[RMDB]
RNA sequence: GGGAACGACUCGAGUAGAGUCGAAAAAAAAGAUAUGGAGCUUUGCUAGGCUGAUGACCUAUACGGAUGUAUAUCGGAAACGAUAUACGGAUGUAUAGCAAGGCCAAACAAAGCUCCUAAGUCAAAACUUUAAAGACAGGUUCGCCUGUCUUUAAAGAAAAGAAACAACAACAACAAC
Reactivity to DMS in 0.01 (KOAc 150mM, MgCl2 10mM, bicine 150mM(pH8.5), 24C), signal-to-noise 2, nucleotides 027 to 126: a120a090a020a080g000a010u020a300u000g030g010a010g000c000u000u020u000g000c010u000a300g000g010c000u010g030a110u020g030a080c300c000u000a000u000a000c000g000g000a300u000g020u000a000u000a010u000c000g000g000a100a090a180c000g000a000u000a000u000a000c000g000g000a300u040g020u000a000u000a000g010c040a060a060g000g000c010c000a020a080a140c000a000a010a010g000c000u000c000c000u000a010a030g010u000c000a120a030a130a120